[RMDB]
RNA sequence: GGGAACGACUCGAGUAGAGUCGAAAAGAAACUUCAACGCCAUCUUGUGUGGGGGUUGUCUAAUGAAUGGUGUUAGGAAAAGACUUUCUGAUAUGUCAUUUCGCAUGAUCAACGUAUUUAAGGAUCCGUGAAGGACUCUAUUCGUAGAGUCCUUCACAAAAGAAACAACAACAACAAC
Reactivity to DMS in 0.01 (KOAc 150mM, MgCl2 10mM, bicine 150mM(pH8.5), 24C), signal-to-noise 2, nucleotides 027 to 126: g000a080a090a060c020u000u000c050a070a080c060g010c020c100a060u010c090u020u010g000u000g030u000g000g000g010g010g030u000u000g010u000c050u010a090a070u010g010a060a020u000g010g010u000g010u000u000a280g000g000a020a020a020a150g020a120c160u000u000u000c040u000g000a100u000a020u000g010u010c030a060u000u000u000c100g020c110a070u000g010a040u020c040a050a060c080g020u010a050u010u000u000a090a140g010g000a040u010c070c300
Reactivity to 2A3 in 0.01 (KOAc 150mM, MgCl2 10mM, bicine 150mM(pH8.5), 24C), signal-to-noise 1, nucleotides 027 to 126: g000a030a030a000c020u050u040c040a060a050c120g030c080c000a040u040c030u150u130g050u050g010u020g070g010g000g060g020u070u010g020u020c050u030a100a090u100g070a030a060u050g090g000u030g010u030u000a030g060g000a010a010a030a030g180a070c020u000u020u000c020u070g020a030u010a020u170g020u000c030a040u010u130u130c040g020c090a060u100g000a050u060c000a000a050c020g050u050a130u110u170u080a080a010g010g000a000u040c080c050
Conditions: 150 mM KOAc, 10 mM MgCl2 and 150 mM bicine (pH 8.5), 24 C. Chemical mapping of a 177-nucleotide RNA with DMS and 2A3. For 2A3, 721 sequencing reads were counted. For 2A3 the reverse transcriptase was SuperScript II with manganese. It was measured as part of the RMDB library OK2TST.